[RMDB]
RNA sequence: GGGAACGACUCGAGUAGAGUCGAAAAGCUACGUUCGCGUAGCGUAGAUCCUAAGUCUAUAGGAGAAGGCAUGAGGGAGCUCUAUCGGAAACGAUAGAGCGAAGAACUCAUGUCUUCGCGAAACUAUAGAUAUGGACGGUAUGUACUUCGGUACAAACCACAUCUGAUAGUUCGCUAUCAGAUGUGGAAAAGAAACAACAACAACAAC
Reactivity to DMS in 0.01 (KOAc 150mM, MgCl2 10mM, bicine 150mM(pH8.5), 24C), signal-to-noise 2, nucleotides 027 to 156: g020c000u000a000c000g010u000u000c220g050c010g060u000a010g000c010g000u010a030g040a090u000c000c000u000a100a260g010u000c000u010a020u000a040g020g000a130g000a030a040g000g010c010a000u000g000a040g020g000g000a300g010c040u000c000u000a010u000c000g030g000a150a140a280c010g020a030u010a020g000a040g050c000g040a040a060g020a150a170c000u010c020a000u000g010u020c000u020u000c010g030c110g000a110a140a240c000u010a030u000a010g040a050u000a300u010g010g000a010c030g020g000u000a120u010g000u000a160c030u020u000c160g060g000u000a030c000a040a100a200
Reactivity to 2A3 in 0.01 (KOAc 150mM, MgCl2 10mM, bicine 150mM(pH8.5), 24C), signal-to-noise 5, nucleotides 027 to 156: g000c000u000a000c010g050u070u210c300g010c020g170u030a010g000c000g000u010a050g020a250u010c000c000u030a160a020g020u000c000u000a010u010a000g000g090a140g000a060a010g010g000c000a000u000g000a010g000g010g010a000g000c000u000c000u000a010u000c000g060g020a070a030a050c000g010a000u000a000g000a010g000c000g000a010a010g000a000a000c000u000c000a000u000g000u000c000u000u010c000g000c000g070a060a020a000c000u000a010u000a020g010a010u030a040u050g030g000a010c030g040g060u250a180u180g010u000a020c010u040u100c260g110g000u040a020c000a020a060a070